[RMDB]
This 207-nucleotide RNA was probed chemically with 2A3. The data come from the RNA Mapping Database (RMDB), library OK3TST.

RNA sequence: GGGAACGACUCGAGUAGAGUCGAAAAGACCACGGUCAUCCAGAACAAUGACUACACCCCGAGCGAGGCCAGCACCCAGACCAUCAAUCUGGAUGACCGGUCGCACUGGGGCGGCGACCUGAAAACCAUCCUGCACACCAACAUGCCCAACGUGAACCAGUACUCUAGACUUCGGUCUAGAGUACUGAAAAGAAACAACAACAACAAC
Reactivity to 2A3 in 0.01 (KOAc 150mM, MgCl2 10mM, bicine 150mM(pH8.5), 24C), signal-to-noise 1, nucleotides 027 to 156: g070a010c010c010a040c070g000g000u010c010a010u030c000c000a000g010a030a070c150a090a090u160g170a100c050u160a090c060a070c010c030c010c000g020a000g000c010g030a060g140g000c070c060a040g000c020a110c020c010c020a030g040a120c030c020a170u170c140a090a100u000c000u000g000g000a000u000g000a000c000c000g000g000u010c000g000c000a040c050u010g000g000g000g020c000g030g000c030g000a030c000c000u030g100a020a080a000a050c000c000a050u040c050c010u080g000c070a040c010a000c080c020a060a090c050a050u160g000c050c020c000a040a040c050g050u060g000a030a060c000
Record summary
Conditions: 150 mM KOAc, 10 mM MgCl2 and 150 mM bicine (pH 8.5), 24 C. Values cover nucleotides 27 to 156.